[RMDB]
RNA sequence: GGGAACGACUCGAGUAGAGUCGAAAAGAAAACGUUUUGAAGUCUGGUUGGAUUUGUCACAUCAUGCCUGUUGCCUAGCACUGCCACAGAUGUCCUUAUCUCACAACAAAAGACUGCAUAGGUGGAGCAGUUCUGGUCUUUUCGAAGACCAGAACUGAAAAGAAACAACAACAACAAC
Reactivity to DMS in 0.01 (KOAc 150mM, MgCl2 10mM, bicine 150mM(pH8.5), 24C), signal-to-noise 3, nucleotides 027 to 126: g000a070a070a080a130c120g000u000u000u000u010g010a070a040g000u020c010u010g000g000u000u000g000g010a040u010u000u000g020u000c030a020c070a060u000c050a080u010g000c070c040u000g010u010u010g040c040c000u010a090g000c010a060c020u000g000c090c050a040c100a040g020a040u020g010u000c070c020u000u030a050u000c030u020c040a120c070a040a130c140a040a030a110a040g000a040c020u000g000c060a090u010a070g000g010u000g010g030a110g000
Reactivity to 2A3 in 0.01 (KOAc 150mM, MgCl2 10mM, bicine 150mM(pH8.5), 24C), signal-to-noise 3, nucleotides 027 to 126: g090a000a080a000a000c050g010u010u010u130u180g050a030a020g030u020c030u050g090g000u020u040g000g060a080u040u020u080g080u060c020a010c010a070u090c030a040u060g020c010c010u070g030u080u020g000c000c020u040a020g020c050a020c090u030g010c000c000a040c010a070g030a070u060g020u030c000c000u030u110a080u020c060u020c010a050c020a030a130c010a030a210a000a010g050a020c030u010g000c050a040u020a070g030g060u060g040g040a040g000
An RNA of 177 nucleotides, treated with DMS and 2A3 and read out base by base. DMS adducts were read by reverse transcription with MarathonRT. The 2A3 profile rests on 1,999 reads.